[RMDB]
Structure probing data (DMS and 2A3) for a 170-nucleotide construct. The DMS profile rests on 12,038 reads. The reactions ran in a buffer of 150 mM KOAc, 10 mM MgCl2 and 150 mM bicine (pH 8.5), at 24 C.

RNA sequence: GGGAACGACUCGAGUAGAGUCGAAAACUCGGACGUUUCCCAGCCAGGGGUUAUCCUCCUCAAGUCUCUUGAUAGUCUUGUUGACCUUCCGGAGGUCCCUCUCGAGCUCCUCCUUUCUUCUUCUUGCACCCCAGCCUGUUCGCAGGCUGGAAAAGAAACAACAACAACAAC
Reactivity to DMS in 0.01 (KOAc 150mM, MgCl2 10mM, bicine 150mM(pH8.5), 24C), signal-to-noise 5, nucleotides 027 to 129: c030u040c050g040g000a110c020g010u040u010u020c040c010c040a190g030c100c030a100g010g000g090g060u000u000a050u040c000c010u040c000c030u020c000a130a140g060u010c010u020c020u010u040g010a040u000a040g010u010c040u000u000g030u000u060g020a050c040c050u020u040c070c050g000g000a060g120g010u020c040c040c020u000c010u040c050g020a130g060c110u000c050c060u020c020c020u020u020u040c000u090u030c120u060u030c000u140u040g030c150a110c110c030
Reactivity to 2A3 in 0.01 (KOAc 150mM, MgCl2 10mM, bicine 150mM(pH8.5), 24C), signal-to-noise 4, nucleotides 027 to 129: c000u000c010g010g020a000c000g000u000u040u080c000c000c000a000g020c000c030a020g020g030g010g010u050u070a060u120c010c000u020c000c000u030c010a080a140g120u000c010u010c000u030u000g010a020u040a030g040u020c000u020u080g100u050u140g020a030c010c000u060u070c060c060g070g030a000g000g010u010c000c000c000u010c010u010c000g000a010g000c060u050c000c000u030c000c000u070u050u030c000u030u000c000u000u020c010u010u040g050c030a060c040c000